[RMDB]
RNA sequence: GGGAACGACUCGAGUAGAGUCGAAAAUUCUUCUGUUCACAGAGGGUCUGAAAUAAAAGUGCUGUGUUUUUGCAACAAGCCACUGCCUCAUGAUGGCUUAGUUGAAGCCGCGUGUUCUAUGUAUAACCUGUGAAAGCCUGAACCUUCUUUUGCAGCCGGUGCUAAAAGUAUUCGUACUUUUAGCACCAAAAGAAACAACAACAACAAC
Reactivity to 2A3 in 0.01 (KOAc 150mM, MgCl2 10mM, bicine 150mM(pH8.5), 24C), signal-to-noise 2, nucleotides 027 to 156: u030u000c030u040u060c010u030g050u130u140c020a020c030a070g030a050g030g040g010u050c060u060g160a100a130a080u190a070a100a070a020g050u140g050c060u010g020u020g050u190u030u030u170u150g050c020a010a020c000a030a020g030c020c010a010c050u090g060c030c030u140c050a060u080g120a160u020g010g000c000u020u010a080g010u020u050g090a060a000g000c010c010g010c000g000u070g000u000u040c040u020a020u030g030u010a060u050a250a070c000c040u020g010u010g120a050a020a000g000c000c000u020g040a060a060c010c000u070u120c000u030u110u060u060g070c020a030g000c050c070
Reactivity to DMS in 0.01 (KOAc 150mM, MgCl2 10mM, bicine 150mM(pH8.5), 24C), signal-to-noise 2, nucleotides 027 to 156: u000u000c010u010u010c030u000g010u000u050c050a120c060a090g000a080g020g030g030u000c030u000g020a090a050a160u010a070a120a110a070g000u000g020c000u000g000u000g020u000u000u010u020u000g000c060a020a060c030a040a070g020c030c030a040c030u010g010c100c080u010c080a140u020g040a100u010g020g010c000u000u000a090g020u000u000g000a090a100g030c010c030g020c060g030u000g000u010u010c050u000a090u010g050u000a070u020a060a070c070c010u010g040u020g010a080a050a080g000c060c040u010g010a040a090c030c020u000u000c010u010u010u000u000g010c010a080g050c140c090